[RMDB]
RNA sequence: GGGAACGACUCGAGUAGAGUCGAAAAAAAAAGAUAUGGAGCUCCUGUGAGCAACAGCCAUACGCCGCUCGUGGUCGGAAACGACGGCGCGUAUGGACAUGCUCUGUGGAGCUCCUAAGUCAAAAAACAUAAUAGAGUACUUCGGUACUCUAUUAUGAAAAGAAACAACAACAACAAC
Reactivity to 2A3 in 0.01 (KOAc 150mM, MgCl2 10mM, bicine 150mM(pH8.5), 24C), signal-to-noise 1, nucleotides 027 to 126: a030a000a150a070a070g040a090u090a110u100g060g000a000g020c020u040c080c020u270g130u170g170a000g000c040a010a010c080a090g020c000c000a000u010a000c000g150c170c050g010c090u240c140g300u260g120g120u080c080g070g110a210a180a080c020g030a020c020g030g000c030g010c000g030u020a000u000g010g000a010c010a000u020g000c000u020c040u000g140u050g030g000a000g000c000u000c000c000u000a040a000g030u000c000a000a000a000a040a150a070
Reactivity to DMS in 0.01 (KOAc 150mM, MgCl2 10mM, bicine 150mM(pH8.5), 24C), signal-to-noise 2, nucleotides 027 to 126: a040a050a080a100a020g000a030u010a300u000g000g000a020g010c010u000c020c010u000g010u010g020a010g000c010a050a030c270a160g000c000c000a000u000a000c000g000c080c070g040c030u020c110g010u000g050g000u010c040g000g000a060a080a090c030g000a010c000g020g010c020g000c000g010u000a000u000g010g020a010c050a150u010g020c000u020c000u000g000u000g000g000a000g000c000u000c000c000u000a010a060g000u010c020a000a040a130a120a060a110